[RMDB]
RNA sequence: GGGAACGACUCGAGUAGAGUCGAAAAGAUAUGGAACCGUAGUUGGGUGGAGCAUGUGUCGGAAACGACCAUGCUAUGAAGCCCAGGUUCGAAGGUUCCUAAGUCAAAACGCUCCUUCGGGAGCGAACAUCUGACCAGGGUUCGCCCUGGUCAGAUGAAAAGAAACAACAACAACAAC
Reactivity to DMS in 0.01 (KOAc 150mM, MgCl2 10mM, bicine 150mM(pH8.5), 24C), signal-to-noise 1, nucleotides 027 to 126: g010a090u010a280u000g050g000a000a020c010c000g020u000a140g020u000u000g010g010g030u000g020g000a020g000c020a010u000g010u010g030u000c000g020g000a060a070a170c000g010a010c000c000a020u020g000c030u000a020u020g000a120a240g000c010c020c000a020g020g000u000u010c090g010a110a150g000g000u010u020c000c000u020a010a160g000u020c000a060a090a060a160c040g010c010u010c000c000u000u020c210g020g000g010a010g030c000g000a030a070
Conditions: 150 mM KOAc, 10 mM MgCl2 and 150 mM bicine (pH 8.5), 24 C. This 177-nucleotide RNA was probed chemically with DMS.